[RMDB]
RNA sequence: GGGAACGACUCGAGUAGAGUCGAAAAGGCGUCUUCGCUGCCUCGGCCGCCCUGCACUGACCGGUAGCCGCCGUAAUAGCGGCAUUGUUCCCAUAAAAGGAUGUGGGUGUGGGUGGCGAAGUAGCAGCAUGAUUAUAGGAUUCGUCCUAUAAUCAUGAAAAGAAACAACAACAACAAC
Reactivity to DMS in 0.01 (KOAc 150mM, MgCl2 10mM, bicine 150mM(pH8.5), 24C), signal-to-noise 9, nucleotides 027 to 126: g010g010c080g010u000c030u000u000c090g010c010u000g010c010c010u000c070g020g020c030c020g010c020c010c010u010g030c050a060c050u000g010a100c060c060g010g010u010a140g020c000c000g020c000c050g010u000a140a100u020a100g010c000g010g010c000a080u010u010g010u000u000c010c010c010a130u010a060a070a120a110g010g000a120u010g020u000g010g010g010u000g010u010g000g010g020u000g000g010c010g010a010a020g020u000a100g020c020a160g010
Reactivity to 2A3 in 0.01 (KOAc 150mM, MgCl2 10mM, bicine 150mM(pH8.5), 24C), signal-to-noise 9, nucleotides 027 to 126: g100g020c050g080u030c030u070u050c050g000c000u010g010c000c000u030c020g180g040c020c010g010c010c010c000u050g020c040a040c060u070g110a080c020c040g030g010u030a040g000c000c000g000c010c000g020u050a060a040u120a150g000c000g010g000c000a000u020u140g010u030u020c000c010c010a020u160a020a150a010a010g090g020a080u160g020u090g110g010g040u040g020u070g020g010g000u010g010g000c010g000a010a000g010u050a020g000c010a010g040
Structure probing data (DMS and 2A3) for a 177-nucleotide construct. For DMS the reverse transcriptase was MarathonRT. Values are in units of 0.01, from 0 to 300, in steps of 10. The DMS profile rests on 69,969 reads. The RNA was probed in 150 mM KOAc, 10 mM MgCl2 and 150 mM bicine (pH 8.5) at 24 C.